[RMDB]
RNA sequence: GGGAACGACUCGAGUAGAGUCGAAAAGUAUCCGCAAGGAUGGGAACUCAGGGAACUGAAACAUCUCAGUACCUGAAGGAGAAGAAAGAGAAUUCGAUUCCGUUAGUAGCGGCGAGCGAACCCGGAUCAGCCCAAACCGAAACGCUUGCGUUUCGGGGAUGCUAAGCUAGUUCGCUAGCUUAGCAUCAAAAGAAACAACAACAACAAC
Reactivity to 2A3 in 0.01 (KOAc 150mM, MgCl2 10mM, bicine 150mM(pH8.5), 24C), signal-to-noise 4, nucleotides 027 to 156: g020u020a020u020c020c020g050c100a030a040g060g010a030u050g000g000g050a040a020c010u000c020a000g020g010g040a080a070c010u010g010a080a160a050c130a300u110c040u000c050a000g000u020a040c010c000u010g030a060a010g030g020a080g020a040a060g060a040a080a020g110a020g030a030a110u110u070c050g030a030u210u050c010c010g000u020u000a000g000u010a000g010c030g120g040c240g040a020g010c000g000a010a000c000c000c020g000g010a020u010c020a010g010c020c010c000a060a050a040c000c000g000a000a000a020c000g020c170u180u300g050c040g000u000u000u010c000g000g000g030
Reactivity to DMS in 0.01 (KOAc 150mM, MgCl2 10mM, bicine 150mM(pH8.5), 24C), signal-to-noise 2, nucleotides 027 to 156: g020u000a120u010c010c000g020c210a140a150g010g010a060u010g000g000g020a080a160c120u000c000a010g000g010g010a130a160c000u000g000a030a160a120c130a140u000c090u000c000a020g000u000a050c040c000u000g000a060a140g010g000a120g030a100a080g000a070a090a200g000a080g000a070a150u000u000c010g020a140u000u010c000c020g000u020u010a190g010u000a180g030c000g010g000c150g000a050g020c050g000a030a100c050c090c020g000g000a100u000c030a100g010c010c010c010a060a100a110c010c010g010a020a020a020c010g010c050u000u010g040c060g040u000u000u000c010g000g030g000
Chemical mapping of a 207-nucleotide RNA with 2A3 and DMS. 2A3 adducts were read by reverse transcription with SuperScript II with manganese. It was measured as part of the RMDB library PDB130. The DMS profile rests on 2,385 reads. For DMS the reverse transcriptase was MarathonRT.